Structure probing data (DMS and 2A3) for a 177-nucleotide construct.
Values cover nucleotides 27 to 126.
The DMS profile rests on 5,633 reads.

RNA sequence: GGGAACGACUCGAGUAGAGUCGAAAACGGAGGCCAGGGCAUGGAGCCACAGGGCAUCCGCAAGAAUGUGGUGUCCAUUCCUGGGUACACCACCACCUUUGGGCUUCAGGGUGCUUCAGGUGCACCGAGCACAUAUGCUAUUCGUAGCAUAUGUGCUAAAAGAAACAACAACAACAAC
Reactivity to DMS in 0.01 (KOAc 150mM, MgCl2 10mM, bicine 150mM(pH8.5), 24C), signal-to-noise 5, nucleotides 027 to 126: c090g010g010a080g010g010c010c010a080g020g000g010c140a070u010g000g000a300g000c010c010a070c080a060g000g000g000c140a080u010c070c060g010c110a090a070g010a170a090u000g010u000g000g010u010g000u000c020c000a090u000u010c040c040u000g000g000g000u010a050c040a070c020c030a070c080c140a040c040c030u000u000u000g010g010g000c040u000u000c060a110g000g010g010u000g000c020u000u010c170a120g010g030u010g010c020a040c020c010g010
Reactivity to 2A3 in 0.01 (KOAc 150mM, MgCl2 10mM, bicine 150mM(pH8.5), 24C), signal-to-noise 5, nucleotides 027 to 126: c040g030g020a030g020g030c020c020a010g020g000g010c070a030u090g100g010a020g010c000c010a050c040a060g050g030g010c010a100u120c050c050g010c050a040a070g110a110a120u120g010u020g010g010u050g190u040c010c000a030u050u050c020c020u040g020g000g010u050a010c020a020c010c000a010c020c010a050c010c010u100u100u090g040g030g020c000u090u050c060a070g100g000g000u030g050c020u090u140c080a070g110g040u070g010c010a020c020c000g010